[RMDB]
RNA sequence: GGGAACGACUCGAGUAGAGUCGAAAAGUGCAUGUCGAGCUUGAUUGGCGCUCGUAAAUCUGCAUUCAAAAAACCAACUGCAAACGACGAACGUUUCGCACUCGCCGCUUAAACACCGGUGAGCCUUGCAACAGCACGCUGAUGGGCUGGGCAAGGGGGUCCUAUUUUACUUCGGUAAAAUAGGACCAAAAGAAACAACAACAACAAC
Reactivity to 2A3 in 0.01 (KOAc 150mM, MgCl2 10mM, bicine 150mM(pH8.5), 24C), signal-to-noise 4, nucleotides 027 to 156: g010u010g000c010a010u100g030u070c000g010a000g010c000u120u120g160a190u150u180g160g010c080g000c010u000c000g030u040a040a120a080u040c040u010g010c010a000u070u130c090a040a000a030a000a030a070c050c040a070a090c060u110g050c050a070a120a000c050g130a010c060g040a200a050c050g020u000u020u000c030g000c010a040c020u010c000g010c010c000g000c010u020u040a060a040a010c010a010c020c010g010g000u010g010a000g000c000c000u010u010g000c030a200a230c000a150g000c010a000c040g060c050u120g070a170u250g100g020g000c000u000g000g010g000c000a000a000g030g020g010
Reactivity to DMS in 0.01 (KOAc 150mM, MgCl2 10mM, bicine 150mM(pH8.5), 24C), signal-to-noise 1, nucleotides 027 to 156: g050u000g050c000a060u010g000u000c070g020a130g030c010u020u000g050a210u000u000g060g000c110g000c000u030c020g020u000a070a060a080u000c050u000g010c000a080u000u000c000a000a010a050a080a080a160c020c010a060a130c100u000g000c020a030a050a050c010g010a100c070g010a100a080c090g000u000u010u000c070g000c030a030c000u000c020g000c000c000g010c020u000u000a140a140a190c080a090c210c020g040g000u000g020a030g000c010c000u020u000g000c020a050a070c040a060g020c000a050c020g000c080u000g000a170u000g030g000g030c000u000g010g000g010c020a020a020g000g050g000